This 177-nucleotide RNA was probed chemically with 2A3 and DMS. Source: RMDB library OK2TRN, as collected in RNAgym. The RNA was probed in 150 mM KOAc, 10 mM MgCl2 and 150 mM bicine (pH 8.5) at 24 C. For DMS the reverse transcriptase was MarathonRT. The 2A3 profile rests on 1,999 reads.
[RMDB]
RNA sequence: GGGAACGACUCGAGUAGAGUCGAAAACAACACGAUGGGGAGGUCAAGGAGCGUUUCGAGGACGGGCUUGCCCGGAAAAUCGAAGCGCGCCAGCAGCCACGCAACCGGCGUGACCAACGUGACGGUGCGUGGUUCGCACCUUCGGGUGCGAACCACGAAAAGAAACAACAACAACAAC
Reactivity to 2A3 in 0.01 (KOAc 150mM, MgCl2 10mM, bicine 150mM(pH8.5), 24C), signal-to-noise 1, nucleotides 027 to 126: c040a020a000c050a000c080g080a130u150g060g000g030g010a040g040g040u070c030a060a110g040g000a040g020c010g010u010u000u000c000g010a020g110g060a020c030g000g000g000c060u150u210g060c010c000c000g050g020a080a120a020a030u000c010g000a000a000g020c000g000c000g000c000c000a010g000c020a010g000c020c000a000c010g020c020a060a100c020c010g030g000c000g000u010g090a180c030c090a070a020c030g000u040g170a100c000g010g030u030g010
Reactivity to DMS in 0.01 (KOAc 150mM, MgCl2 10mM, bicine 150mM(pH8.5), 24C), signal-to-noise 3, nucleotides 027 to 126: c050a080a120c100a060c040g020a080u000g000g000g010g000a110g010g030u000c100a190a150g010g000a060g000c000g030u000u000u000c010g020a010g000g010a210c020g000g000g000c030u000u000g000c010c010c000g020g010a020a030a130a170u000c000g000a010a000g010c020g010c000g000c040c000a120g010c200a080g000c000c000a040c020g000c080a070a060c010c030g000g000c030g030u010g000a240c160c160a100a020c020g000u010g010a190c020g010g000u000g020